[RMDB]
RNA sequence: GGGAACGACUCGAGUAGAGUCGAAAACCCCAUCGAGAGGUGGACCGUCGGAGGAAUGGGGCGUUCAGCCCCAGGAGAGCCGAUGGUGUCUGACGACUGGAGUCGCCAGGCGGAGCAAACGAGUAAUUCUAGAGCUAAUACGUGCGUAAAUCCCGACCUUCAAGGUCUAGUUCGCUAGACCUUGAAGAAAAGAAACAACAACAACAAC
Reactivity to 2A3 in 0.01 (KOAc 150mM, MgCl2 10mM, bicine 150mM(pH8.5), 24C), signal-to-noise 2, nucleotides 027 to 156: c000c000c000c000a040u040c040g090a080g010a040g050g020u020g020g010a000c000c000g010u000c000g000g000a020g030g000a050a030u010g000g000g010g000c010g060u240u220c170a040g050c000c000c000c000a000g000g000a060g000a010g010c000c000g000a000u000g000g000u030g000u000c000u010g020a010c000g000a010c020u140g220g130a170g060u000c000g010c010c000a010g020g000c010g010g000a040g000c100a080a060a040c040g020a020g060u130a050a090u120u080c090u180a040g030a040g110c020u030a090a060u080a120c070g060u100g050c010g060u090a050a000a160u020c010c000c000g010a030c040